[RMDB]
RNA sequence: GGGAACGACUCGAGUAGAGUCGAAAAGAGAAUCGAAACCAGAAACGAUGUCGUCCAGGAAACUAUCCCAGUUGAAAACAACGAAACUUCAAUAAGUGCUCUCAUUAAAAAUGACGACUUUGAAGGAACUCGCAUAUAUGUUCGCAUAUAUGCGAGUAAAAGAAACAACAACAACAAC
Reactivity to 2A3 in 0.01 (KOAc 150mM, MgCl2 10mM, bicine 150mM(pH8.5), 24C), signal-to-noise 7, nucleotides 027 to 126: g080a000g040a040a100u090c050g050a190a030a090c050c050a090g100a070a080a030c040g030a050u110g050u160c020g040u030c030c000a030g080g100a090a060a050c050u050a080u060c000c000c000a010g010u030u050g060a050a030a010a040c050a030a000c040g090a130a050a030c030u020u010c010a030a080u120a260a030g060u080g080c020u000c000u010c040a030u030u200a110a060a140a040a040u080g010a020c110g010a030c000u030u020u030g030a030a020g010g010a010
Reactivity to DMS in 0.01 (KOAc 150mM, MgCl2 10mM, bicine 150mM(pH8.5), 24C), signal-to-noise 5, nucleotides 027 to 126: g010a150g000a090a040u010c050g010a070a130a160c130c100a120g010a110a100a140c060g010a050u010g010u020c020g020u010c030c080a110g000g010a090a080a080c100u010a070u000c000c010c010a080g010u000u000g000a080a060a060a070c110a030a030c160g000a070a070a100c010u000u000c010a060a030u010a030a050g000u020g010c100u010c060u000c020a030u030u040a040a070a060a070a080u010g000a010c210g000a020c030u000u000u010g000a020a030g000g030a070
Conditions: 150 mM KOAc, 10 mM MgCl2 and 150 mM bicine (pH 8.5), 24 C.
Chemical mapping of a 177-nucleotide RNA with 2A3 and DMS.
DMS adducts were read by reverse transcription with MarathonRT.
The 2A3 profile rests on 5,893 reads.
It was measured as part of the RMDB library OK1LIB.
2A3 adducts were read by reverse transcription with SuperScript II with manganese.